[RMDB]
Source information:
Chemical mapping of a 177-nucleotide RNA with 2A3. For 2A3, 264 sequencing reads were counted. Reactivities are given for positions 27 through 126. The RNA was probed in 150 mM KOAc, 10 mM MgCl2 and 150 mM bicine (pH 8.5) at 24 C. 2A3 adducts were read by reverse transcription with SuperScript II with manganese. It was measured as part of the RMDB library OK1LIB.
RNA sequence: GGGAACGACUCGAGUAGAGUCGAAAAAGAUUUUGAUGUUAAAGAUUGCGGCACUGUCGCAGCACUUUUAACUCAAACACUGUUUCAAUUUGGGAAAAUCACCUGUGGAAAAUGCGCAAUCGAGUACUGCGGAUUAGCAGUUCGCUGCUAAUCCGCAAAAAGAAACAACAACAACAAC
Reactivity to 2A3 in 0.01 (KOAc 150mM, MgCl2 10mM, bicine 150mM(pH8.5), 24C), signal-to-noise 1, nucleotides 027 to 126: a000g180a000u190u290u250u290g070a150u240g060u100u000a000a210a110g060a060u140u020g000c000g180g000c020a000c240u260g020u000c000g000c000a000g000c040a000c000u090u000u000u050a010a000c000u000c120a000a180a000c060a260c040u120g120u060u000u170c300a300a300u000u000u000g000g000g080a230a000a000a000u000c040a000c060c000u000g000u000g000g000a020a060a000a000u100g000c010g060c000a000a000u010c000g000a000g120u050a100c120